[RMDB]
Structure probing data (2A3) for a 207-nucleotide construct. The reactions ran in a buffer of 150 mM KOAc, 10 mM MgCl2 and 150 mM bicine (pH 8.5), at 24 C.
RNA sequence: GGGAACGACUCGAGUAGAGUCGAAAACUCACAAGUUCAAAAGUCUACAAGGUCAGUCAAAUAACAGUACGAAGUGAAACUAGCCAGACAGCAAGGUGGGGGUCAGGGGAGGAAUUGGGGACACUGGGAAACUUUCCCUGAAGGUACUCUGAUUCAAUCCAUUUAAUUUAUUCGUAAAUUAAAUGGAAAAAGAAACAACAACAACAAC
Reactivity to 2A3 in 0.01 (KOAc 150mM, MgCl2 10mM, bicine 150mM(pH8.5), 24C), signal-to-noise 1, nucleotides 027 to 156: c010u030c010a040c040a080a050g070u220u180c020a080a090a030a070g040u040c110u130a200c080a110a040g030g050u120c040a000g010u060c000a010a090a100u210a070a130c050a070g030u080a040c010g040a200a000g000u040g030a040a100a080c020u010a020g080c040c000a030g010a050c030a020g040c070a100a110g040g030u260g050g080g000g000g020u100c040a020g010g020g020g020a100g010g030a030a090u040u030g030g000g000g010a020c030a030c050u020g010g030g020a070a050a030c030u110u090u000c010c030c030u000g050a090a030g030g010u000a010c030u030c050u200g000a040u070u130c100a080a000